[RMDB]
RNA sequence: GGGAACGACUCGAGUAGAGUCGAAAAGAUAUGGAUAGUUGUCAGGCUAGCCACUCGAAGAACGAUCAUCGGAAACGAUGAUCGGGAGAGUGGCAAUAGCCUUGGAUUUACUAUCCUAAGUCAAACGAGAUGAAUACGUUCGCGUAUUCAUCUCGAAGUCCUACUUCCACUUCGGUGGAAGUAGGACAAAAGAAACAACAACAACAAC
Reactivity to 2A3 in 0.01 (KOAc 150mM, MgCl2 10mM, bicine 150mM(pH8.5), 24C), signal-to-noise 1, nucleotides 027 to 156: g000a000u040a010u270g000g000a000u000a000g000u010u030g050u040c010a000g070g000c010u050a160g300c000c000a040c000u010c020g240a300a150g000a000a010c000g000a020u000c000a000u000c000g050g000a100a030a010c050g000a000u000g010a000u010c040g020g000g010a040g000a010g000u060g030g000c020a000a040u010a000g000c000c020u020u030g000g010a010u210u210u060a000c000u000a010u010c010c000u000a020a000g010u010c030a060a000a030c010g000a000g000a000u000g000a000a010u000a000c000g010u050u140c300g000c000g260u000a000u000u000c000a000u000c000u000c000g000a000a000